[RMDB]
RNA sequence: GGGAACGACUCGAGUAGAGUCGAAAAGGUCUUACGUCAGCCAUGACAACAACGGUAACUGUCAUGGUUGUCACAGAGAUGUGACGACGCUGACCAUCUAAGUUACCGCUUGUUAGAUGGUAAGACAAUUAGGGUGGUAUUUCGAUACCACCCUAAUAAAAGAAACAACAACAACAAC
Reactivity to DMS in 0.01 (KOAc 150mM, MgCl2 10mM, bicine 150mM(pH8.5), 24C), signal-to-noise 5, nucleotides 027 to 126: g030g000u000c010u000u000a040c050g010u000c020a250g010c050c040a160u000g000a110c050a010a040c040a060a040c010g000g000u000a010a020c000u000g010u000c050a020u010g010g020u000u000g010u000c000a000c000a010g000a230g000a170u000g010u000g010a020c010g010a020c030g010c130u000g010a020c020c300a070u000c180u000a100a070g000u000u000a010c010c000g020c110u000u000g010u000u000a080g000a030u010g000g000u000a030a030g000a020c010a140
Reactivity to 2A3 in 0.01 (KOAc 150mM, MgCl2 10mM, bicine 150mM(pH8.5), 24C), signal-to-noise 3, nucleotides 027 to 126: g080g020u030c000u040u050a050c060g050u010c020a030g040c040c020a050u100g080a100c050a040a000c010a010a010c020g020g000u010a020a010c000u090g000u030c010a060u200g060g000u000u020g000u000c000a000c010a000g040a000g010a050u020g000u010g000a000c020g020a010c020g030c270u030g010a020c000c010a090u050c060u140a070a010g000u000u010a010c000c010g020c150u000u000g000u000u010a050g010a050u030g040g000u050a100a040g010a010c020a020